[RMDB]
RNA sequence: GGGAACGACUCGAGUAGAGUCGAAAAGGUUUCAUUCGUGAAACCGAACGUUGAUGAUGAACUCGCUUGUUGCUGAAGGGUGAUGAAGGGCAUACUGGCUGAUUGGGGUCCCUGCUUCGGCAGGGACGUUAUCUAUGGUAUUCGUACCAUAGAUAACAAAAGAAACAACAACAACAAC
Reactivity to 2A3 in 0.01 (KOAc 150mM, MgCl2 10mM, bicine 150mM(pH8.5), 24C), signal-to-noise 9, nucleotides 027 to 126: g020g000u010u000u010c030a030u050u120c210g080u030g030a000a000a000c010c000g010a060a010c050g060u060u100g060a130u040g010a040u050g030a050a040c020u020c050g020c040u030u080g060u070u090g060c030u030g060a090a050g050g010g020u040g010a070u070g040a030a050g030g000g000c010a010u050a090c030u050g050g010c020u040g030a130u040u130g040g000g040g000u000c000c000c000u000g000c000u020u040c130g090g000c000a000g000g000g000a000c000
Reactivity to DMS in 0.01 (KOAc 150mM, MgCl2 10mM, bicine 150mM(pH8.5), 24C), signal-to-noise 9, nucleotides 027 to 126: g010g000u000u000u000c000a040u000u010c190g020u000g000a010a010a000c000c000g010a070a080c160g010u000u000g010a090u000g000a100u000g010a080a080c060u000c060g010c130u000u000g010u000u000g010c040u000g010a100a090g010g010g020u000g010a070u000g010a080a090g000g010g010c050a060u010a070c080u000g010g000c050u000g010a100u000u000g010g000g020g010u000c000c000c000u000g000c000u000u010c210g020g010c000a010g010g000g000a000c020